An RNA of 177 nucleotides, treated with DMS and 2A3 and read out base by base. It was measured as part of the RMDB library OK2TRN. For 2A3 the reverse transcriptase was SuperScript II with manganese. Reactivities are given for positions 27 through 126.
RNA sequence: GGGAACGACUCGAGUAGAGUCGAAAACUCGAAGACCCACCAAAGCACGAAAGCCGGGAUCUUUCAGAAAAUGGAUUCCUAUUCGAAGGGUGCAUAACCGCAUGGAUAAGCUCACACUAACCCGUCAGAUAGAGUAAUCUUUCGAGAUUACUCUAUCAAAAGAAACAACAACAACAAC
Reactivity to DMS in 0.01 (KOAc 150mM, MgCl2 10mM, bicine 150mM(pH8.5), 24C), signal-to-noise 6, nucleotides 027 to 126: c050u000c060g010a120a100g000a110c060c030c010a150c100c090a070a110a110g010c030a070c060g010a070a090a100g010c100c120g000g010g000a030u000c020u000u000u010c090a130g000a040a040a120a080u000g000g000a080u000u000c030c000u000a130u000u000c060g010a090a110g000g000g030u000g000c060a040u000a090a070c070c050g000c070a060u000g000g010a060u010a060a080g010c040u000c030a040c040a040c110u000a070a120c020c010c010g000u000c140a080
Reactivity to 2A3 in 0.01 (KOAc 150mM, MgCl2 10mM, bicine 150mM(pH8.5), 24C), signal-to-noise 5, nucleotides 027 to 126: c010u010c030g010a050a030g050a060c030c000c020a010c030c050a130a090a000g030c020a010c080g070a150a060a010g050c090c050g000g050g020a080u010c020u010u150u090c060a080g160a040a130a040a040u130g030g000a010u070u030c000c010u040a090u030u050c040g060a100a050g080g020g000u030g010c000a040u090a110a030c020c020g030c080a050u080g020g020a020u020a100a030g010c000u020c010a050c000a010c030u040a060a080c000c010c000g080u080c060a010